[RMDB]
RNA sequence: GGGAACGACUCGAGUAGAGUCGAAAAUGAACUAUUGAAUAACUAAUCAACGUAAUCAAAAGAACCACACAGAUUUGGGGCAUUCCCAGAGUUAGGUAGGGUGAGCAAAAGAGACAUGGGAUGUAGAGAGGAAAUCACCGAAAGAGCUGAUGUCGGAGAGUACGAUGAGUUUCGACUCAUCGUACUCAAAAGAAACAACAACAACAAC
Reactivity to 2A3 in 0.01 (KOAc 150mM, MgCl2 10mM, bicine 150mM(pH8.5), 24C), signal-to-noise 2, nucleotides 027 to 156: u160g010a030a010c030u050a130u240u100g040a030a150u110a140a050c100u160a120a090u170c070a020a150c100g050u100a070a080u080c080a090a090a010a020g010a000a050c010c010a030c000a000c020a050g090a140u080u070u070g010g000g010g000c080a060u060u080c020c000c000a010g100a000g030u140u050a010g030g100u040a010g060g060g040u040g000a030g030c040a030a110a100a030g070a000g010a020c000a020u030g100g000g000a000u000g030u060a050g030a000g000a000g030g000a000a090a000u050c000a010c050c060g000a000a010a030g040a000g000c090u070g030a030u120g090u080c030g020g020a030